Structure probing data (DMS and 2A3) for a 207-nucleotide construct. The RNA was probed in 150 mM KOAc, 10 mM MgCl2 and 150 mM bicine (pH 8.5) at 24 C. The 2A3 profile rests on 7,084 reads. For DMS, 6,003 sequencing reads were counted. 2A3 adducts were read by reverse transcription with SuperScript II with manganese. Source: RMDB library RNAMAK, as collected in RNAgym.

[RMDB]
RNA sequence: GGGAACGACUCGAGUAGAGUCGAAAAGGGGUCGCUUUGUGUAGGAUAGGUGCUUCCAUUAGAGCUUGGAUUUACUGAAGCCUCCACGGUUGUCAGCUCUAACUAGGAAGCACUCUGAGCGACGGAGGCACCCAAAACUACACGUUCGCGUGUAGAAGAGACAAGUAAUGUUCGCAUUACUUGUCUCAAAAGAAACAACAACAACAAC
Reactivity to DMS in 0.01 (KOAc 150mM, MgCl2 10mM, bicine 150mM(pH8.5), 24C), signal-to-noise 3, nucleotides 027 to 156: g020g000g010g050u000c030g020c010u000u000u000g000u000g000u000a080g010g030a200u010a040g010g000u000g020c000u010u010c000c030a250u010u000a030g010a040g030c020u000u010g050g030a100u000u000u000a060c040u010g000a050a100g000c010c000u000c030c030a300c070g010g000u000u000g020u010c060a090g000c000u010c010u000a010a070c220u000a160g030g010a020a010g010c020a010c010u000c020u020g010a120g010c010g030a070c010g020g040a030g040g040c010a090c000c000c010a070a060a090a180c040u000a020c000a020c000g000u000u010c300g030c040g020u010g010u000a020g020a100a170
Reactivity to 2A3 in 0.01 (KOAc 150mM, MgCl2 10mM, bicine 150mM(pH8.5), 24C), signal-to-noise 6, nucleotides 027 to 156: g050g000g020g010u020c030g040c050u080u120u120g150u120g110u210a100g080g140a160u140a180g030g060u010g000c010u000u000c010c010a060u020u060a010g000a010g000c040u110u190g160g020a130u260u250u190a070c030u030g060a090a030g020c000c010u030c070c040a050c040g000g020u090u110g060u070c010a010g000c000u000c000u010a070a100c090u070a090g000g010a000a000g000c000a000c000u000c000u020g010a010g000c000g000a000c010g000g020a020g010g000c030a050c010c000c000a040a100a000a030c000u010a000c000a010c000g020u060u070c280g010c010g090u020g000u020a010g010a060a030